[RMDB]
RNA sequence: GGGAACGACUCGAGUAGAGUCGAAAAUGUCGCCUACCGGGCGUUGCCAUGCCUUCGACGAAGCAGCUGAUGGCUUCGUGUCCGGUGAGGGGUGCGUGGUCCUGCUGCUGAAGCGGCUACCGGAUGCCGCUGGUCAGUUCUUCGGAACUGACCAGCGAAAAGAAACAACAACAACAAC
Reactivity to 2A3 in 0.01 (KOAc 150mM, MgCl2 10mM, bicine 150mM(pH8.5), 24C), signal-to-noise 1, nucleotides 027 to 126: u120g000u020c020g040c020c040u070a090c010c000g060g040g020c060g000u020u070g100c010c020a020u040g110c010c000u070u080c040g050a100c040g030a040a000g030c110a000g000c010u130g080a110u170g070g000c020u000u010c010g010u020g000u000c020c030g090g040u130g090a100g060g000g000g020u080g010c000g110u060g030g000u010c000c020u010g000c020u040g010c030u050g050a120a030g020c000g000g030c020u130a080c080c070g060g020a040u100g080c000
Reactivity to DMS in 0.01 (KOAc 150mM, MgCl2 10mM, bicine 150mM(pH8.5), 24C), signal-to-noise 2, nucleotides 027 to 126: u000g030u010c030g040c040c010u000a030c020c000g010g010g000c010g030u010u000g010c000c000a060u000g040c060c030u000u000c070g010a140c060g000a100a030g000c030a070g020c060u000g000a120u020g020g000c000u000u000c010g010u000g010u010c000c020g010g000u010g010a150g030g010g000g020u000g010c040g020u000g000g000u000c020c010u000g000c020u020g020c050u000g000a120a150g010c020g000g000c010u000a130c130c030g000g000a100u000g010c070
Record summary: The record gives the reactivity of an RNA of 177 nucleotides to 2A3 and DMS. For 2A3, 969 sequencing reads were counted. 2A3 adducts were read by reverse transcription with SuperScript II with manganese. For DMS, 2,394 sequencing reads were counted. Values cover nucleotides 27 to 126. It was measured as part of the RMDB library OK2TST.